The record gives the reactivity of an RNA of 177 nucleotides to 2A3 and DMS. 2A3 adducts were read by reverse transcription with SuperScript II with manganese. It was measured as part of the RMDB library OK2TRN. The RNA was probed in 150 mM KOAc, 10 mM MgCl2 and 150 mM bicine (pH 8.5) at 24 C. For DMS, 724 sequencing reads were counted.

RNA sequence: GGGAACGACUCGAGUAGAGUCGAAAAUGCUAAAAUCAUUGCGAUACCCAUUGUACCCAUGGCAGCACCACGUUUUUCAGGUGGAUAAAUUGUAAUAAUAACAAUUGAACCUAAUGGCAUUAGUACACUUCUCGGUACAGUUCGCUGUACCGAGAAGAAAAGAAACAACAACAACAAC
Reactivity to 2A3 in 0.01 (KOAc 150mM, MgCl2 10mM, bicine 150mM(pH8.5), 24C), signal-to-noise 2, nucleotides 027 to 126: u030g000c010u030a080a000a000a220u130c060a040u040u180g090c030g040a100u110a170c000c000c000a010u060u070g050u080a060c030c000c000a030u060g080g000c030a040g020c010a000c030c030a050c100g040u030u010u000u190u260c090a030g080g060u000g040g000a010u050a030a050a000u040u060g010u020a010a060u110a300a110u100a150a000c000a010a000u010u020g030a080a020c000c000u090a170a000u090g030g040c040a060u080u050a030g040u060a020c040a010
Reactivity to DMS in 0.01 (KOAc 150mM, MgCl2 10mM, bicine 150mM(pH8.5), 24C), signal-to-noise 1, nucleotides 027 to 126: u020g050c020u000a110a110a230a080u020c050a060u000u000g000c060g110a110u020a160c020c010c000a100u010u000g050u000a070c050c060c080a030u010g000g000c020a040g000c050a150c010c000a040c070g000u000u030u000u000u050c130a070g020g020u000g010g020a050u000a070a030a020u010u000g000u000a050a090u000a110a100u000a130a020c000a000a000u010u000g000a090a160c090c020u000a080a110u000g000g000c090a020u040u000a110g000u000a140c080a080